Description:
This 170-nucleotide RNA was probed chemically with DMS and 2A3. For 2A3, 37,558 sequencing reads were counted. The data come from the RNA Mapping Database (RMDB), library 15KLIB. The RNA was probed in 150 mM KOAc, 10 mM MgCl2 and 150 mM bicine (pH 8.5) at 24 C. DMS adducts were read by reverse transcription with MarathonRT.
RNA sequence: GGGAACGACUCGAGUAGAGUCGAAAAUACGGAUGCCCAGGUCGGACCGCGAGGAGGUGGAGAUCCCAUGCCGACCCGAAGAGGAAAGGAGGACACGGACGACAAACCGUGAGUUCUAUUGCCCUUUAUGGCUACCUGUUCGCAGGUAGCAAAAGAAACAACAACAACAAC
Reactivity to DMS in 0.01 (KOAc 150mM, MgCl2 10mM, bicine 150mM(pH8.5), 24C), signal-to-noise 9, nucleotides 027 to 129: u040a080c140g000g020a070u000g010c040c030c020a130g010g000u040c050g010g000a080c040c040g030c070g050a070g000g000a060g010g000u000g020g000a050g020a100u000c020c010c000a110u040g030c030c030g030a100c040c020c040g010a020a000g000a070g000g040a020a060a030g010g030a030g020g040a070c060a060c030g000g040a090c110g000a030c280a040a070a050c030c000g020u040g010a100g010u050u000c060u000a100u040u050g010c060c000c040u040u050u050a100u090g030
Reactivity to 2A3 in 0.01 (KOAc 150mM, MgCl2 10mM, bicine 150mM(pH8.5), 24C), signal-to-noise 9, nucleotides 027 to 129: u260a030c100g050g030a030u090g030c010c010c020a020g040g060u040c020g050g040a080c020c020g010c030g030a040g030g010a010g010g020u040g020g000a070g000a040u070c020c000c010a040u110g020c010c010g050a050c000c020c010g050a020a010g020a010g010g000a020a030a010g020g010a010g000g010a010c010a010c030g020g040a020c040g040a050c080a040a080a020c000c010g020u020g030a040g020u060u010c040u050a100u040u160g050c010c000c000u050u120u060a150u160g090